Source: RMDB library RFM100, as collected in RNAgym. Structure probing data (DMS and 2A3) for a 177-nucleotide construct. The RNA was probed in 150 mM KOAc, 10 mM MgCl2 and 150 mM bicine (pH 8.5) at 24 C.
[RMDB]
RNA sequence: GGGAACGACUCGAGUAGAGUCGAAAACAGGAGUAAUAUGUUGGACAGUCACUUUUACGUAAAUCAUCUGGCAAGUUAACGCACGCUAUUCCUGCGCUGCUUGCCGAACCGGUGGGCAGCAAUCUCCUAUACGUCCCGUGUUCGCACGGGACGUAUAAAAAGAAACAACAACAACAAC
Reactivity to DMS in 0.01 (KOAc 150mM, MgCl2 10mM, bicine 150mM(pH8.5), 24C), signal-to-noise 1, nucleotides 027 to 126: c010a000g010g020a010g010u000a030a060u010a080u040g000u050u000g000g030a110c170a120g000u000c000a130c060u020u000u070u000a070c170g000u030a020a020a230u040c220a090u000c090u000g000g000c040a010a100g000u070u020a080a030c040g000c000a030c140g000c120u000a110u000u000c050c090u000g030c010g000c000u000g000c000u000u010g000c010c000g000a030a070c130c030g110g250u000g040g000g000c000a000g000c000a150a000u120c130u020c000c070
Reactivity to 2A3 in 0.01 (KOAc 150mM, MgCl2 10mM, bicine 150mM(pH8.5), 24C), signal-to-noise 3, nucleotides 027 to 126: c000a000g000g040a000g050u030a000a120u110a090u300g020u080u050g080g000a010c000a050g010u040c000a010c040u000u070u160u230a000c080g080u120a000a110a090u080c000a020u020c030u020g040g010c030a070a150g010u070u050a120a010c000g000c030a000c000g000c050u090a060u010u060c000c000u040g000c130g010c010u030g000c030u060u010g010c020c010g030a080a020c080c040g000g010u000g000g020g040c000a000g000c000a000a050u090c040u000c060c020